[RMDB]
RNA sequence: GGGAACGACUCGAGUAGAGUCGAAAAACUACUGUGGCAAGAAUUGUGGGAAGCUACAGACAAUCUUUCUGAAAUAUCCGAUGGAGAAGGUGCCUGGCGCCCGGAUGCCAGUGCAGAUACGGGUCAACGAGCCGUAUAGUUUCGACUAUACGGCUCGAAAAGAAACAACAACAACAAC
Reactivity to 2A3 in 0.01 (KOAc 150mM, MgCl2 10mM, bicine 150mM(pH8.5), 24C), signal-to-noise 1, nucleotides 027 to 126: a000c020u140a010c020u010g010u020g050g000c020a000a100g080a250a230u270u140g090u120g130g090g070a140a050g000c000u000a010c010a000g020a010c060a010a040u100c030u010u160u030c040u100g100a120a040a010u140a060u060c020c040g090a110u100g050g010a100g000a090a040g070g040u010g000c020c010u030g000g060c000g070c060c120c060g140g010a030u040g060c000c000a010g020u040g060c000a000g000a070u140a030c020g000g010g010u120c030a100a100
Reactivity to DMS in 0.01 (KOAc 150mM, MgCl2 10mM, bicine 150mM(pH8.5), 24C), signal-to-noise 1, nucleotides 027 to 126: a120c090u000a120c000u010g000u000g020g000c040a090a130g040a120a140u000u010g060u000g010g000g020a160a180g000c030u010a040c020a020g000a200c140a070a060u000c050u020u000u020c000u000g020a050a090a100u000a060u020c010c030g020a130u000g000g000a070g000a030a040g000g040u000g010c010c030u020g000g000c030g040c040c050c110g050g030a030u000g000c010c000a030g040u000g030c010a020g000a100u000a080c010g010g000g010u000c130a030a110